RNA sequence: GGGAACGACUCGAGUAGAGUCGAAAAGAUCAGCCGGUUCCUGAGAAGUACUGGGAUCGUGUUGGGCAAUACUGUGACAACGACGUGAUCACCACGAAGGACGUUCUUCGUAAUCGCUGGCAGGACCUUAUCGCUCGUCGUAUUCUGGCAGAGCUUAGGCCUCUCUCUUAUUCGUAAGAGAGAGGCCAAAAGAAACAACAACAACAAC
Reactivity to 2A3 in 0.01 (KOAc 150mM, MgCl2 10mM, bicine 150mM(pH8.5), 24C), signal-to-noise 1, nucleotides 027 to 156: g010a050u020c000a000g020c040c000g000g020u030u000c000c000u060g030a140g020a110a030g000u170a050c120u100g000g000g000a010u000c000g080u070g010u090u050g010g050g000c000a010a030u140a050c000u200g040u210g130a060c030a030a070c000g150a000c040g000u020g000a040u050c050a090c120c000a000c060g000a080a000g070g030a150c120g300u220u110c000u020u040c030g020u040a060a060u060c000g000c030u020g020g010c050a050g000g070a070c000c060u160u270a180u060c080g000c000u000c000g050u000c010g130u210a140u100u120c030u060g080g000c010a030g030a020g100c030u000u080a000

Chemical mapping of a 207-nucleotide RNA with 2A3. It was measured as part of the RMDB library OK3TST. For 2A3 the reverse transcriptase was SuperScript II with manganese. Conditions: 150 mM KOAc, 10 mM MgCl2 and 150 mM bicine (pH 8.5), 24 C.